[RMDB]
RNA sequence: GGGAACGACUCGAGUAGAGUCGAAAAACAGCAAGGGCUUUGAGCUUGACCAUCCUCACGUAAUUGCCUUGGGUGAUCACUUCCCCGAUGGCGUUGAUGAGUUCGGGGUUCGUGACCCCGUCAUUGGCAAAUCCUAUCAAUUCGUUGAUAGGAUUUGAAAAGAAACAACAACAACAAC
Reactivity to 2A3 in 0.01 (KOAc 150mM, MgCl2 10mM, bicine 150mM(pH8.5), 24C), signal-to-noise 5, nucleotides 027 to 126: a000c040a020g080c040a050a110g080g040g010c060u090u180u250g060a030g010c010u050u060g030a060c000c010a030u030c000c020u030c010a040c050g080u100a080a120u120u130g030c010c000u040u050g020g030g000u180g050a120u060c020a020c080u100u030c000c010c000c010g020a030u070g040g000c030g030u050u160g100a210u070g020a040g140u080u040c000g000g000g000g020u070u060c060g020u040g060a040c000c010c000c010g020u050c030a080u030u130g060g000
Reactivity to DMS in 0.01 (KOAc 150mM, MgCl2 10mM, bicine 150mM(pH8.5), 24C), signal-to-noise 9, nucleotides 027 to 126: a100c110a090g010c070a080a090g010g000g010c050u000u000u010g010a100g010c030u000u000g010a150c070c040a070u010c060c020u000c060a060c150g010u000a060a070u000u010g010c020c020u000u000g010g010g010u010g000a090u000c100a040c080u000u000c020c000c000c010g010a030u010g010g020c080g010u010u010g010a100u010g010a110g010u010u000c020g010g000g000g010u000u000c160g000u000g000a150c020c000c000c010g010u000c120a060u010u000g010g010